[RMDB]
RNA sequence: GGGAACGACUCGAGUAGAGUCGAAAAGAUAUGGAGGAUGGUUCAGCGAAGAACAACCUCCAAUCGGAAACGAUUGGAGGGUUGGGAGCUGUCAUCCUCCUAAGUCAAAGGAGUGUUCGCACUCCAAGAGAAUACACGAGUUCGCUCGUGUAUUCUCAAAAGAAACAACAACAACAAC
Reactivity to DMS in 0.01 (KOAc 150mM, MgCl2 10mM, bicine 150mM(pH8.5), 24C), signal-to-noise 2, nucleotides 027 to 126: g020a020u000a300u000g020g010a000g010g020a010u000g000g000u020u030c020a020g090c000g020a170a160g030a170a200c040a030a050c000c000u000c000c000a000a000u000c000g000g000a060a090a200c000g000a000u000u000g000g010a000g020g000g040u020u000g020g010g000a150g010c000u000g000u000c000a010u000c000c010u000c000c010u010a000a050g000u000c030a080a150a180g020g000a020g050u000g000u000u000c250g000c020a010c000u000c000c010a070a080
Reactivity to 2A3 in 0.01 (KOAc 150mM, MgCl2 10mM, bicine 150mM(pH8.5), 24C), signal-to-noise 2, nucleotides 027 to 126: g020a010u070a040u110g000g000a020g000g010a020u020g000g180u300u300c020a010g000c070g180a300a070g120a300a150c020a020a030c000c000u000c010c000a000a000u000c000g020g000a040a030a000c010g000a000u000u010g000g020a020g000g130g000u030u030g000g050g030a170g000c000u010g020u020c000a000u000c000c000u010c000c000u000a020a000g000u000c030a080a010a070g000g010a010g020u030g050u060u260c190g080c130a000c000u010c000c030a000a000